[RMDB]
Record summary
Conditions: 150 mM KOAc, 10 mM MgCl2 and 150 mM bicine (pH 8.5), 24 C. An RNA of 207 nucleotides, treated with DMS and 2A3 and read out base by base. The DMS profile rests on 3,758 reads. It was measured as part of the RMDB library RNAMAK. Reactivities are given for positions 27 through 156. For DMS the reverse transcriptase was MarathonRT.
RNA sequence: GGGAACGACUCGAGUAGAGUCGAAAACCACCCUUCGGGGUGGAAAAAAUCCUAAGUCCGUUUGACGCGAGUUGUCAGAGGUUGGCCUUCGGAAACGAAGGCCAUCCUCUUGGAUUUACUCGCCGAGGAUAUGGAUGCGUGGGCAUUUCGAUGCCAACCUCUAAAUCAUCUUCGGAUGAUUUAGAGGAAAAGAAACAACAACAACAAC
Reactivity to DMS in 0.01 (KOAc 150mM, MgCl2 10mM, bicine 150mM(pH8.5), 24C), signal-to-noise 2, nucleotides 027 to 156: c010c010a030c000c000c000u000u000c290g090g040g030g070u000g000g000a000a000a040a060a060a060u020c010c010u000a090a200g010u000c000c010g020u000u000u000g000a200c150g010c000g020a040g010u000u000g000u000c010a010g010a020g030g000u010u000g040g020c000c000u000u010c000g020g000a190a100a300c030g010a030a020g050g030c000c000a010u000c010c000u000c000u000u010g030g000a050u000u000u000a030c000u000c040g000c010c000g000a250g000g000a020u000a170u010g020g000a050u000g000c070g020u020g000g000g010c010a090u000u000u020c230g000a150u010g010c000c000a040a180
Reactivity to 2A3 in 0.01 (KOAc 150mM, MgCl2 10mM, bicine 150mM(pH8.5), 24C), signal-to-noise 2, nucleotides 027 to 156: c000c010a000c000c000c000u030u090c230g150g000g000g020u060g000g000a020a010a000a020a000a040u030c020c020u050a140a010g000u000c020c020g010u080u160u160g040a030c040g000c000g000a000g000u000u010g000u030c010a010g000a010g020g000u000u000g050g000c000c000u000u010c030g000g070a130a040a040c000g010a000a020g000g000c020c000a000u010c000c000u010c000u000u060g000g010a000u080u050u140a010c000u020c000g000c020c000g040a010g000g000a030u010a040u070g010g030a010u020g100c120g170u210g120g000g000c010a030u180u210u160c250g080a020u030g000c000c000a040a050